An RNA of 177 nucleotides, treated with DMS and 2A3 and read out base by base. Source: RMDB library TTRDES, as collected in RNAgym. The reactions ran in a buffer of 150 mM KOAc, 10 mM MgCl2 and 150 mM bicine (pH 8.5), at 24 C. 2A3 is a SHAPE reagent: it acylates the 2'-hydroxyl of flexible nucleotides of all four kinds. 2A3 adducts were read by reverse transcription with SuperScript II with manganese. High DMS reactivity at an A or C suggests that its Watson-Crick edge is free.
RNA sequence: GGGAACGACUCGAGUAGAGUCGAAAAGAUAUGGAGAUCCGGAUGGACAUGAUGUUGGAUCGGAAACGAUCCAUCAUCAACAGCCAUGGAUCUCCUAAGUCAAAACAGCUGUCUUCGGACAGCUGAAGUACUAGGCAUUGUUCGCAAUGCCUAGUACAAAAGAAACAACAACAACAAC
Reactivity to DMS in 0.01 (KOAc 150mM, MgCl2 10mM, bicine 150mM(pH8.5), 24C), signal-to-noise 3, nucleotides 027 to 126: g000a020u000a020u020g000g010a030g020a000u000c010c010g030g010a180u010g000g000a010c120a120u020g020a020u000g010u000u030g000g000a010u010c000g040g000a010a010a010c010g020a010u000c010c000a000u010c000a010u000c010a080a050c150a150g000c000c000a050u000g000g010a000u000c000u000c000c000u000a010a070g010u000c000a130a110a130a270c000a000g000c000u000g000u010c000u000u010c270g040g010a010c000a000g010c000u000g000a040a150
Reactivity to 2A3 in 0.01 (KOAc 150mM, MgCl2 10mM, bicine 150mM(pH8.5), 24C), signal-to-noise 4, nucleotides 027 to 126: g000a010u030a010u040g000g000a010g020a010u010c030c040g290g300a140u060g040g000a030c210a300u300g010a010u000g010u000u010g010g000a010u010c000g020g010a010a000a000c010g010a000u010c000c000a000u000c000a000u010c000a010a100c140a040g000c000c000a020u040g000g010a000u000c000u000c000c000u010a000a000g000u000c010a000a010a130a210c010a000g000c000u020g020u010c000u060u170c300g180g000a010c000a000g000c000u000g000a020a020